This 207-nucleotide RNA was probed chemically with DMS and 2A3. The 2A3 profile rests on 2,403 reads. The RNA was probed in 150 mM KOAc, 10 mM MgCl2 and 150 mM bicine (pH 8.5) at 24 C. Reactivities are rounded to 0.1 and cut off at 0 and 3.
[RMDB]
RNA sequence: GGGAACGACUCGAGUAGAGUCGAAAAUUGUGUCAUUUGUAUUCCAACAGCAAGUGGCACUAACUUGCGGGCAGUUGGAAUACCUGUAAGUGACUCAGUGCUCCUAAUCUAAGUACUGAGUGAACUUGUCAACUAAGAUUAGGAGUUGGCAAGUGUAUCACGUACUGAGUUUCGACUCAGUACGUGAAAAAGAAACAACAACAACAAC
Reactivity to DMS in 0.01 (KOAc 150mM, MgCl2 10mM, bicine 150mM(pH8.5), 24C), signal-to-noise 2, nucleotides 027 to 156: u010u000g000u000g000u000c030a080u000u000u000g010u010a050u010u000c040c090a040a030c040a200g030c020a020a040g040u000g020g020c160a100c130u000a050a030c030u000u000g020c000g030g030g080c120a100g050u000u000g020g010a100a050u000a000c010c060u010g000u010a070a050g050u000g010a060c010u000c010a020g030u010g000c040u000c060c030u010a160a160u010c120u010a050a070g000u000a030c010u000g000a070g040u000g000a030a010c030u000u010g010u010c000a010a010c000u000a090a130g010a220u000u000a150g010g010a070g010u000u000g000g010c010a020a020g080u000g010u000a110
Reactivity to 2A3 in 0.01 (KOAc 150mM, MgCl2 10mM, bicine 150mM(pH8.5), 24C), signal-to-noise 3, nucleotides 027 to 156: u060u060g040u020g050u070c030a050u020u100u180g010u010a010u030u000c010c010a010a010c020a020g000c010a010a000g000u040g070g020c080a030c040u050a040a010c000u010u000g000c000g000g040g060c140a090g040u020u010g000g000a000a020u010a020c000c000u130g130u090a090a060g050u020g040a010c000u000c010a010g000u000g000c010u020c010c010u080a140a130u100c070u070a120a030g040u030a030c030u040g020a020g040u050g020a010a030c010u000u010g030u020c000a000a000c030u050a020a120g090a300u080u240a070g210g000a030g000u010u000g000g000c010a010a020g000u020g010u020a040

DMS adducts were read by reverse transcription with MarathonRT.